Notes
This 177-nucleotide RNA was probed chemically with DMS and 2A3. The 2A3 profile rests on 4,078 reads. It was measured as part of the RMDB library TTRDEL. DMS adducts were read by reverse transcription with MarathonRT. Conditions: 150 mM KOAc, 10 mM MgCl2 and 150 mM bicine (pH 8.5), 24 C. 2A3 adducts were read by reverse transcription with SuperScript II with manganese.
[RMDB]
RNA sequence: GGGAACGACUCGAGUAGAGUCGAAAAGAUAUGGACCCUUCCAUGAUGGACAAUGAGUCGGAAACGACGAGUCCACAUGGAGAGGGUCCUAAGUCAAAACACCAAACAGCUUCGGCUGUUUGGUGAACUUGCUAAUUGGGUUCGCCCAAUUAGCAAGAAAAGAAACAACAACAACAAC
Reactivity to DMS in 0.01 (KOAc 150mM, MgCl2 10mM, bicine 150mM(pH8.5), 24C), signal-to-noise 3, nucleotides 027 to 126: g010a020u000a300u000g010g010a010c000c000c010u010u010c000c000a010u010g000a180u000g000g010a010c000a150a170u020g010a200g000u000c000g000g000a090a090a200c010g010a000c000g010a170g030u000c000c000a030c010a000u000g000g000a010g010a000g020g000g000u000c000c000u000a000a040g030u000c040a080a050a130a160c010a010c000c020a000a020a020c000a010g020c000u000u000c250g020g000c010u000g010u010u000u000g000g000u000g010a010a100
Reactivity to 2A3 in 0.01 (KOAc 150mM, MgCl2 10mM, bicine 150mM(pH8.5), 24C), signal-to-noise 2, nucleotides 027 to 126: g020a040u080a050u200g000g010a010c010c000c000u000u000c050c010a030u090g140a300u020g090g000a010c010a070a300u270g030a070g060u020c010g010g060a080a060a060c010g000a000c020g010a010g000u000c000c010a000c020a000u000g020g020a060g080a010g000g000g000u000c000c000u010a000a000g000u000c010a000a000a120a110c000a000c000c000a010a000a010c000a000g100c020u110u300c300g200g010c010u000g010u000u000u020g000g010u000g000a010a020